[RMDB]
RNA sequence: GGGAACGACUCGAGUAGAGUCGAAAAGGGGUCUAAAGCAGCUGAGGUGUAGACAUGUUCUGAAGCCUCCACGGAACAACAGCUACACUACCCACCAGCGCUUUAGACGGAGGCACCCAAACCACAUAGUCUAUACUUCGGUAUAGACUAUGUGGAAGACUGCAAUCUAGUUCGCUAGAUUGCAGUCAAAAGAAACAACAACAACAAC
Reactivity to 2A3 in 0.01 (KOAc 150mM, MgCl2 10mM, bicine 150mM(pH8.5), 24C), signal-to-noise 3, nucleotides 027 to 156: g090g000g020g000u020c010u010a030a010a000g000c160a040g000c010u000g030a010g000g010u000g000u020a020g030a080c080a240u220g010u010u000c010u010g030a110a020g000c000c000u020c000c020a020c020g020g000a020a010c020a030a030c040a080g100c020u010a000c010a010c010u080a050c060c070c010a100c020c010a010g000c000g000c010u010u000u000a010g000a010c020g000g000a000g000g000c000a020c000c000c000a050a040a030c000c010a000c000a000u000a000g010u000c000u000a000u000a000c010u040u060c290g060g000u000a000u000a000g000a000c000u000a000u000g000u000g000g000a010a000
Reactivity to DMS in 0.01 (KOAc 150mM, MgCl2 10mM, bicine 150mM(pH8.5), 24C), signal-to-noise 1, nucleotides 027 to 156: g000g000g060g040u000c010u000a040a010a050g000c020a070g080c000u010g000a190g000g020u000g020u000a030g000a090c070a300u000g060u000u000c020u000g000a040a180g050c000c000u000c020c030a300c030g000g000a030a000c030a160a060c030a080g060c020u000a040c000a050c010u010a030c030c040c070a300c020c050a010g010c010g000c000u000u000u000a030g000a050c010g040g050a030g080g000c020a060c020c000c030a040a220a140c000c020a000c010a040u000a000g020u000c010u000a040u000a000c010u010u000c300g000g000u010a000u000a090g000a000c000u000a000u000g020u000g000g000a030a030
An RNA of 207 nucleotides, treated with 2A3 and DMS and read out base by base. The 2A3 profile rests on 4,533 reads. Conditions: 150 mM KOAc, 10 mM MgCl2 and 150 mM bicine (pH 8.5), 24 C. DMS adducts were read by reverse transcription with MarathonRT. Reactivities are given for positions 27 through 156.